[RMDB]
RNA sequence: GGGAACGACUCGAGUAGAGUCGAAAAGAUAUGGAUUGUCAGCGGAUCAUCUGGGUCGGAAACGACCCAGAGUGAAUCGCUUGGAUUUAUCCUAAGUCAAAGAUUUGUCACUUCGGUGACAAAUCAACUAAACUGCGUAGUUCGCUACGCAGUUUAGAAAAGAAACAACAACAACAAC
Reactivity to DMS in 0.01 (KOAc 150mM, MgCl2 10mM, bicine 150mM(pH8.5), 24C), signal-to-noise 2, nucleotides 027 to 126: g000a050u010a300u010g010g000a020u000u010g010u000c010a020g000c000g010g000a070u000c000a040u000c000u010g000g000g010u000c000g010g010a080a110a190c000g040a020c000c000c000a000g000a010g000u000g010a030a070u000c010g000c000u020u010g020g010a020u000u020u010a000u000c010c010u000a060a140g010u000c050a080a110a140g000a000u000u000u000g010u000c000a020c010u000u010c260g020g000u000g010a000c000a000a000a000u000c000a100a150
Reactivity to 2A3 in 0.01 (KOAc 150mM, MgCl2 10mM, bicine 150mM(pH8.5), 24C), signal-to-noise 1, nucleotides 027 to 126: g000a020u060a040u150g000g000a000u020u000g040u010c000a000g000c000g050g080a070u090c000a010u000c000u000g000g060g000u000c020g000g040a110a020a040c000g000a000c020c040c010a000g010a010g040u050g000a020a070u080c000g000c000u030u140g130g000a010u300u140u140a020u000c000c000u020a080a030g080u030c050a200a080a000g020a010u000u020u020g010u000c000a000c000u040u160c300g130g020u000g010a010c020a010a020a000u000c000a000a000
This 177-nucleotide RNA was probed chemically with DMS and 2A3. It was measured as part of the RMDB library TTRDEL. The reactions ran in a buffer of 150 mM KOAc, 10 mM MgCl2 and 150 mM bicine (pH 8.5), at 24 C. The 2A3 profile rests on 2,351 reads.